[RMDB]
RNA sequence: GGGAACGACUCGAGUAGAGUCGAAAACAGCCUACACUCUGACCCCCCGGCCUAUUAUUCACGCUGUUGCCCCCGACUAUCGGGUUGAACAUAACCCUAAGCGGCUUGAGGCUGCCUAUCGGGAGACGAUUACCUGUGUGUUCGCACACAGGUAAUCAAAAGAAACAACAACAACAAC
Reactivity to DMS in 0.01 (KOAc 150mM, MgCl2 10mM, bicine 150mM(pH8.5), 24C), signal-to-noise 2, nucleotides 027 to 126: c080a040g000c010c040u000a130c090a030c060u000c040u010g000a250c040c020c020c020c040c030g000g000c020c050u000a090u030u010a110u000u010c110a070c120g000c050u000g000u000u000g020c010c010c000c000c000g000a090c170u000a140u000c150g010g000g000u010u000g010a050a140c160a120u010a050a060c000c000c010u010a160a170g010c010g010g010c040u010u000g010a110g040g010c010u000g010c030c030u000a090u010c100g010g000g000a120g010a100c110